Structure probing data (DMS and 2A3) for a 177-nucleotide construct.
[RMDB]
RNA sequence: GGGAACGACUCGAGUAGAGUCGAAAAGAUCAAUUAUGAUUGCAAUGUAAUAUGUCAAGGCAGACAUAUCUAGCUGUCGCCUUAGCUAGAGAUUGCCGUUUUAUUGCUUUCAUAAGAACGGCCAGAAAAUAUACGCACUAUUCGUAGUGCGUAUAUUAAAAGAAACAACAACAACAAC
Reactivity to DMS in 0.01 (KOAc 150mM, MgCl2 10mM, bicine 150mM(pH8.5), 24C), signal-to-noise 9, nucleotides 027 to 126: g000a140u000c090a110a160u000u000a010u000g000a010u000u000g000c010a010a010u000g010u010a040a070u000a060u010g010u010c170a090a120g010g010c030a070g000a080c150a080u000a100u000c010u000a010g000c010u000g010u010c200g010c220c130u010u000a010g010c000u000a010g000a040g000a100u000u000g010c000c030g010u000u000u000u010a020u000u000g000c010u000u000u000c010a010u000a010a020g010a080a100c150g010g010c020c060a150g000a110a050
Reactivity to 2A3 in 0.01 (KOAc 150mM, MgCl2 10mM, bicine 150mM(pH8.5), 24C), signal-to-noise 7, nucleotides 027 to 126: g040a100u140c040a010a100u050u010a010u040g010a000u010u030g000c000a010a010u040g040u190a070a060u100a100u210g190u160c070a060a060g030g000c010a000g040a130c040a070u160a060u030c010u010a010g000c000u010g100u180c080g180c040c030u100u080a000g000c000u010a000g000a010g010a050u020u100g010c010c010g020u050u030u030u060a010u010u000g000c010u010u020u010c020a010u010a020a010g020a040a030c050g070g030c020c010a040g100a040a180